Background
Structure probing data (DMS and 2A3) for a 207-nucleotide construct. The reactions ran in a buffer of 150 mM KOAc, 10 mM MgCl2 and 150 mM bicine (pH 8.5), at 24 C. For 2A3 the reverse transcriptase was SuperScript II with manganese. For 2A3, 4,060 sequencing reads were counted. It was measured as part of the RMDB library M2RFPK.

[RMDB]
RNA sequence: GGGAACGACUCGAGUAGAGUCGAAAACCAGAUGACGGUCCUGCCAUGAGACCGCAACGAGAGCAUGUCGCGUCGAAUGGACUCGGGGAGUCGGCAGCUUGCCCCACGGAUGAGCGCCUAAUGCCGGAAGAGACGUGCAACUUCGGUUGCACGUCAACCGGAUGUAUAUGUUCGCAUAUACAUCCGGAAAAGAAACAACAACAACAAC
Reactivity to DMS in 0.01 (KOAc 150mM, MgCl2 10mM, bicine 150mM(pH8.5), 24C), signal-to-noise 2, nucleotides 027 to 156: c010c030a110g040a150u020g000a090c010g050g010u000c030c010u000g020c090c180a090u000g000a170g020a010c010c060g020c000a070a050c010g020a180g030a100g010c040a100u000g010u010c050g000c030g040u010c020g000a210a120u000g000g000a080c060u000c060g010g000g020g020a090g030u010c020g010g010c040a090g000c030u000u000g000c040c010c010c050a160c080g020g010a110u000g000a080g030c050g000c040c030u000a050a110u000g000c010c020g000g000a080a140g010a170g000a010c000g010u000g000c000a020a020c000u000u000c300g060g000u000u000g000c000a000c020g020u000c010a010a040
Reactivity to 2A3 in 0.01 (KOAc 150mM, MgCl2 10mM, bicine 150mM(pH8.5), 24C), signal-to-noise 5, nucleotides 027 to 156: c010c000a020g090a180u100g040a030c040g000g030u040c010c030u060g090c020c030a090u090g020a030g010a060c020c040g000c020a030a070c050g100a020g010a020g130c090a100u130g040u180c030g010c050g020u050c040g050a050a060u060g020g030a060c050u020c110g010g010g000g010a040g050u050c000g030g000c010a020g020c020u060u120g030c000c000c000c030a070c040g030g020a100u110g030a020g020c030g020c010c000u100a110a050u130g000c010c030g020g010a060a030g060a020g000a050c000g000u000g010c010a010a000c000u030u040c110g100g000u000u000g000c000a000c000g000u000c000a000a000